The record gives the reactivity of an RNA of 177 nucleotides to 2A3 and DMS. Conditions: 150 mM KOAc, 10 mM MgCl2 and 150 mM bicine (pH 8.5), 24 C. Values cover nucleotides 27 to 126. For 2A3 the reverse transcriptase was SuperScript II with manganese.
[RMDB]
RNA sequence: GGGAACGACUCGAGUAGAGUCGAAAAUGCUGUUCAUGAUUUUUUUCCGCGAAUCCGACAACGAAAUUACGGCUAUCAAGGUCGAUGAUCGCGAUAUUGCGUUGACACAAGGGGAAGUUAAAUGAAACCCAUAGCCAUCAUUCGUGAUGGCUAUGGGAAAAGAAACAACAACAACAAC
Reactivity to 2A3 in 0.01 (KOAc 150mM, MgCl2 10mM, bicine 150mM(pH8.5), 24C), signal-to-noise 1, nucleotides 027 to 126: u080g020c020u010g000u050u100c010a020u100g120a130u110u070u020u020u030u020u000c040c010g090c020g100a030a060u040c050c020g030a020c010a070a010c060g070a030a000a050u190u080a010c010g060g010c010u010a030u170c010a120a060g110g050u010c030g050a080u060g030a010u040c040g050c060g050a050u010a040u120u100g030c000g020u000u050g070a040c050a040c050a190a070g000g020g000g000a000a080g070u130u100a020a140a120u120g010a040a020a010
Reactivity to DMS in 0.01 (KOAc 150mM, MgCl2 10mM, bicine 150mM(pH8.5), 24C), signal-to-noise 2, nucleotides 027 to 126: u010g040c090u000g020u000u010c060a090u000g000a020u000u000u000u000u000u000u000c060c040g020c150g000a120a050u000c060c060g000a070c030a030a060c100g000a030a050a090u000u000a080c080g000g020c050u000a150u000c110a080a080g010g000u000c100g020a100u000g010a030u000c020g060c020g050a160u000a080u000u000g020c070g010u030u000g000a120c100a050c070a040a090g010g010g000g000a080a100g000u000u000a030a090a090u000g000a050a020a120